Conditions: 150 mM KOAc, 10 mM MgCl2 and 150 mM bicine (pH 8.5), 24 C.
Chemical mapping of a 177-nucleotide RNA with 2A3 and DMS.
For 2A3 the reverse transcriptase was SuperScript II with manganese.
DMS (dimethyl sulfate) methylates the pairing face of unpaired adenines and cytosines.
Values are in units of 0.01, from 0 to 300, in steps of 10.
Values cover nucleotides 27 to 126.
For DMS the reverse transcriptase was MarathonRT.

[RMDB]
RNA sequence: GGGAACGACUCGAGUAGAGUCGAAAACUUGAGCAGGAUUGCUCCCCUGUGGCUGACGUGACCGUCGCCACCUGCUCUCAUGUGGUUGAUAAAAACGUCACCACUUUUACCACCGAUGCACCUGCAAAUUCGAAUAGGGCUUCGGCCCUAUUCGAAUAAAAGAAACAACAACAACAAC
Reactivity to 2A3 in 0.01 (KOAc 150mM, MgCl2 10mM, bicine 150mM(pH8.5), 24C), signal-to-noise 4, nucleotides 027 to 126: c050u080u160g030a010g000c000a000g030g110a170u110u210g030c020u090c010c030c000c010u030g010u040g030g040c150u080g000a000c000g060u070g120a090c010c160g020u020c000g000c000c000a000c000c000u000g000c030u000c040u060c070a090u090g020u040g020g040u150u300g070a040u090a070a180a030a030a000c040g020u000c000a000c000c000a010c000u070u030u050u110a090c010c020a000c020c040g040a040u100g000c030a020c030c000u000g030c030a020a040
Reactivity to DMS in 0.01 (KOAc 150mM, MgCl2 10mM, bicine 150mM(pH8.5), 24C), signal-to-noise 1, nucleotides 027 to 126: c020u000u050g000a080g010c000a020g000g020a070u050u020g000c140u040c000c010c000c010u010g000u000g000g020c260u040g000a000c000g000u030g000a150c250c230g000u000c000g030c000c000a050c000c030u000g000c130u060c230u020c080a000u010g030u000g010g000u000u020g000a030u010a040a140a060a140a030c110g020u020c010a010c000c000a000c020u000u050u000u020a160c040c050a080c020c050g030a160u010g040c010a120c000c000u000g010c050a010a080